[RMDB]
RNA sequence: GGGAACGACUCGAGUAGAGUCGAAAAUCGAAUGUUGAAUGAAUUAAUGCAUUUGGAGAUCUUACAAUCAUAAUGGCUAGUCAAACCAUGUGCAAAAUGAGUUAGUUAAUUAUGGAGACAUUUCAAACGUUGCAGUAAAAAUUGACAUCAUUGGCAAUAACCCAAUAUACUUCGGUAUAUUGGGUUAAAAAGAAACAACAACAACAAC
Reactivity to 2A3 in 0.01 (KOAc 150mM, MgCl2 10mM, bicine 150mM(pH8.5), 24C), signal-to-noise 2, nucleotides 027 to 156: u060c020g000a010a040u060g010u010u030g030a060a110u050g020a030a120u130u070a050a010u110g010c010a000u010u010u050g020g010a040g010a060u020c030u130u080a150c070a070a110u110c010a040u070a140a040u030g060g030c040u010a020g050u050c070a040a010a010c010c010a010u020g060u040g060c080a050a020a050a100u070g020a010g100u050u020a030g000u010u060a160a040u030u010a050u020g020g000a020g010a010c010a080u030u080u040c040a080a060a000c040g030u080u050g030c030a000g030u090a000a050a020a050a050u030u050g000a010c000a010u050c010a010u060u140g110g010c010a000a080
Reactivity to DMS in 0.01 (KOAc 150mM, MgCl2 10mM, bicine 150mM(pH8.5), 24C), signal-to-noise 4, nucleotides 027 to 156: u010c040g000a110a060u000g000u000u000g020a200a120u000g000a100a070u000u000a060a070u000g010c030a060u010u010u000g030g020a150g020a090u010c050u000u020a140c120a110a120u000c030a080u000a090a020u000g020g010c010u000a150g030u000c070a080a110a070c010c010a020u020g030u000g000c090a040a050a080a070u010g010a110g010u010u000a010g020u010u000a060a070u000u000a080u000g020g010a300g010a050c030a030u000u000u000c060a090a070a110c100g020u000u000g010c020a070g040u000a030a070a050a080a090u000u010g000a070c020a080u010c060a090u010u010g010g000c050a060a190